RNA sequence: GGGAACGACUCGAGUAGAGUCGAAAAGCAGAAUUGCAGAUCAGCCAGAGGAGACGUGCCAGGAUGAUUCCUGCGGAAACACUCUAUGGAGCGCUUAACAGCGAACCAGAACAUAGAGUAUACCAGCUGCGUAUAACGUGUUCGCACGUUAUACGCAAAAAGAAACAACAACAACAAC
Reactivity to 2A3 in 0.01 (KOAc 150mM, MgCl2 10mM, bicine 150mM(pH8.5), 24C), signal-to-noise 2, nucleotides 027 to 126: g040c060a040g010a300a230u190u100g000c000a020g050a130u030c020a000g010c050c000a070g030a070g090g000a040g040a100c060g030u100g000c060c040a030g020g000a040u110g030a020u050u080c010c000u020g000c010g010g000a020a050a000c040a000c000u030c000u000a020u000g000g050a090g080c000g020c000u160u130a130a030c030a020g000c010g010a030a050c070c020a000g050a070a010c020a020u000a000g030a000g010u000a020u030a070c030c020a020g010c020
Reactivity to DMS in 0.01 (KOAc 150mM, MgCl2 10mM, bicine 150mM(pH8.5), 24C), signal-to-noise 2, nucleotides 027 to 126: g020c020a080g010a070a090u010u030g010c040a010g000a090u010c060a060g030c030c010a060g000a100g000g010a150g000a070c200g050u000g010c060c020a070g000g000a030u010g010a110u000u030c010c000u000g000c040g000g000a070a110a090c180a030c000u000c000u000a010u000g000g000a150g050c010g030c010u000u010a100a100c300a050g020c020g010a040a040c060c140a180g000a140a160c170a050u000a020g000a030g020u000a070u000a110c030c030a210g030c130